Structure probing data (DMS and 2A3) for a 177-nucleotide construct.

RNA sequence: GGGAACGACUCGAGUAGAGUCGAAAAAACAACUUUGAGUUGACUGACCUAUUGAAAUAUGACACUAGUAAUGAAGUGAUACUCAAGGUCUUGACUUUGAUGGCAAAAAUAUCUGAGGCAAACCAGCGCGAGGGAUAAAUUUCGAUUUAUCCCUCGCAAAAGAAACAACAACAACAAC
Reactivity to DMS in 0.01 (KOAc 150mM, MgCl2 10mM, bicine 150mM(pH8.5), 24C), signal-to-noise 1, nucleotides 027 to 126: a040a130c010a030a000c010u000u000u010g000a080g060u000u010g000a030c040u010g000a190c070c000u030a040u050u040g000a040a120a060u060a030u050g000a180c150a030c000u060a090g000u090a060a000u060g010a100a000g090u050g000a090u050a050c000u000c000a000a030g000g000u000c000u000u040g000a050c020u000u000u000g010a020u000g000g000c150a050a040a050a130a090u130a000u030c000u010g000a080g050g000c000a000a010a100c090c000a060g000c220
Reactivity to 2A3 in 0.01 (KOAc 150mM, MgCl2 10mM, bicine 150mM(pH8.5), 24C), signal-to-noise 3, nucleotides 027 to 126: a000a010c080a030a000c030u020u060u060g020a030g010u010u070g090a040c000u020g050a050c000c000u030a080u140u100g090a130a090a020u300a160u300g080a020c010a010c020u030a010g100u280a130a070u180g100a290a000g060u100g070a060u040a070c010u010c010a000a010g000g030u090c090u020u040g040a030c010u000u030u060g030a040u120g020g060c150a020a020a000a170a000u150a050u000c010u030g020a020g020g000c030a030a000a050c020c020a030g070c000